[RMDB]
RNA sequence: GGGAACGACUCGAGUAGAGUCGAAAAGAUAUGGAUAAGCAUCGAUCUUAUAGGGUCGGAAACGACCUUAAGGGAGCUUGAUCCUAAGUCAAAGAGCUACUGGCUAGUUCGCUAGCCAGUAGCUCAACUCUAUCCCUGUGUUCGCACAGGGAUAGAGAAAAGAAACAACAACAACAAC
Reactivity to DMS in 0.01 (KOAc 150mM, MgCl2 10mM, bicine 150mM(pH8.5), 24C), signal-to-noise 2, nucleotides 027 to 126: g000a040u010a300u020g000g000a000u000a030a020g030c000a300u010c160g000a080u000c020u000u000a110u020a050g000g000g000u030c000g000g000a100a100a220c010g000a010c000c010u000u000a020a110g000g000g000a010g000c010u000u000g000a070u000c000c000u020a050a120g000u000c060a090a100a160g000a000g030c000u000a000c000u000g030g010c010u000a010g000u000u010c290g000c030u000a000g020c000c000a000g030u010a000g000c000u020c000a000a050